[RMDB]
RNA sequence: GGGAACGACUCGAGUAGAGUCGAAAACGAGCACUGUAUACGCCGGCGCGCCAUCCGGCCUCCGCCGAUACCGGCCGAUCGAGCGCACCCGAGUAUGUUCGUCUCAAUCGGCCCCGGGAGGUUUGGCGGGACGGACUAUCUUCGGAUAGUCCGUCCCAAAAGAAACAACAACAACAAC
Reactivity to 2A3 in 0.01 (KOAc 150mM, MgCl2 10mM, bicine 150mM(pH8.5), 24C), signal-to-noise 1, nucleotides 027 to 126: c010g060a050g060c100a120c090u140g110u100a010u070a160c070g030c010c010g010g000c000g040c000g000c040c010a010u110c000c050g030g010c020c010u000c000c020g090c050c060g050a100u150a110c110c000g000g000c000c000g000a000u000c060g000a040g050c000g010c050a040c050c160c010g000a030g030u070a200u290g030u040u010c040g230u010c120u000c000a000a060u000c000g030g070c000c000c010c000g000g030g030a050g010g000u100u090u000g140g000c020